[RMDB]
RNA sequence: GGGAACGACUCGAGUAGAGUCGAAAAAAACUUAUAACAAAUUCAUGUAUCGGAAAAGCCGCAUGUGGAGAUUACACAAGAAGUGGGCCACUGAAUACGCGGAAUACAGGGCCGAACAUGGAUUAGACCCAUGUUAUACAUUCGUGUAUAACAUGGGAAAAGAAACAACAACAACAAC
Reactivity to 2A3 in 0.01 (KOAc 150mM, MgCl2 10mM, bicine 150mM(pH8.5), 24C), signal-to-noise 4, nucleotides 027 to 126: a000a010a020c300u300u240a300u140a230a040c020a030a060a040u020u010c000a000u000g030u060a300u100c000g000g030a040a080a090a070g050c030c000g000c020a050u050g000u010g040g020a040g050a190u120u300a130c010a000c020a090a120g210a210a040g070u010g000g060g000c000c000a000c000u030g070a080a020u140a140c120g010c020g000g050a010a010u100a050c070a080g060g170g060c000c000g000a000a000c000a000u010g010g010a000u010u000a020g010a010
Reactivity to DMS in 0.01 (KOAc 150mM, MgCl2 10mM, bicine 150mM(pH8.5), 24C), signal-to-noise 2, nucleotides 027 to 126: a060a070a100c130u010u000a120u020a190a140c080a090a020a010u000u000c030a030u000g010u000a160u000c000g020g000a030a110a170a160g040c020c030g000c010a130u000g030u000g010g010a060g000a120u000u010a160c020a010c010a080a070g000a110a100g020u000g000g000g000c010c010a000c000u010g000a090a110u010a070c210g000c000g010g000a110a020u010a140c210a150g000g040g040c020c000g010a010a060c010a020u000g000g010a000u000u000a020g000a250